RNA sequence: GGGAACGACUCGAGUAGAGUCGAAAAGAUAUGGAGGGUACGAGAGCGAUAAGGCUGUAUCGGAAACGAUAUAAGCCUUUUGACGCUCGAGUACCCUCCUAAGUCAAAAGGCUCCUUCGGGAGCCAAGUCUUAUAGCACGUUCGCGUGCUAUAAGACAAAAGAAACAACAACAACAAC
Reactivity to DMS in 0.01 (KOAc 150mM, MgCl2 10mM, bicine 150mM(pH8.5), 24C), signal-to-noise 2, nucleotides 027 to 126: g000a040u000a300u000g030g000a030g000g010g000u000a010c030g010a300g000a050g010c000g000a090u000a020a020g020g040c010u000g000u000a010u000c000g010g010a170a070a240c000g060a000u000a000u000a020a070g010c000c000u000u000u020u000g050a300c070g010c000u000c000g000a300g030u010a000c000c000c000u000c000c000u010a000a070g010u030c010a040a090a150a110g020g040c000u000c000c000u000u020c170g040g000g020a040g010c000c030a000a030